[RMDB]
RNA sequence: GGGAACGACUCGAGUAGAGUCGAAAACAAUCGCGCCCCUAUCUUGGCCCGCCCACCUACUUAUGCAGGUAUUCCCCGGGGUGCCAUUAGUGGUUUUGUGGGCAAGUGGUUUGACCGCAGUGGUUAGCGGGGUUACAAUCAGCCAAGUUAUUACACCCUUCUGAUAAUGGUUCGCCAUUAUCAGAAGAAAAGAAACAACAACAACAAC
Reactivity to DMS in 0.01 (KOAc 150mM, MgCl2 10mM, bicine 150mM(pH8.5), 24C), signal-to-noise 1, nucleotides 027 to 156: c060a120a060u000c060g000c040g000c010c010c010c030u000a100u010c070u000u000g020g000c020c060c060g000c010c030c040a060c020c010u000a000c040u000u000a080u010g000c080a100g000g020u010a150u000u010c040c000c060c100g020g020g080g050u010g000c010c060a080u000u010a020g020u020g040g030u010u010u010u020g040u000g000g000g070c020a070a060g070u010g030g020u000u000u000g030a090c000c000g060c000a300g030u010g010g000u000u060a060g020c010g020g020g000g010u010u000a100c030a090a040u000c020a050g000c000c020a030a240g000u020u000a110u010u000a110c050a110c020c020
Reactivity to 2A3 in 0.01 (KOAc 150mM, MgCl2 10mM, bicine 150mM(pH8.5), 24C), signal-to-noise 3, nucleotides 027 to 156: c050a040a170u130c040g000c020g050c050c000c000c010u090a100u070c020u040u030g030g000c010c020c020g000c000c020c000a000c010c010u040a040c020u050u070a040u110g050c100a050g140g000u100a150u080u120c040c010c020c000g010g030g000g090u040g030c020c030a010u030u050a010g010u010g080g020u050u070u130u300g020u010g000g000g000c010a020a020g070u170g050g000u080u050u100g040a010c000c010g020c000a000g010u050g070g010u040u030a020g010c000g000g030g000g000u020u070a020c030a000a020u030c010a000g000c000c000a010a000g030u050u040a110u050u130a060c050a060c030c000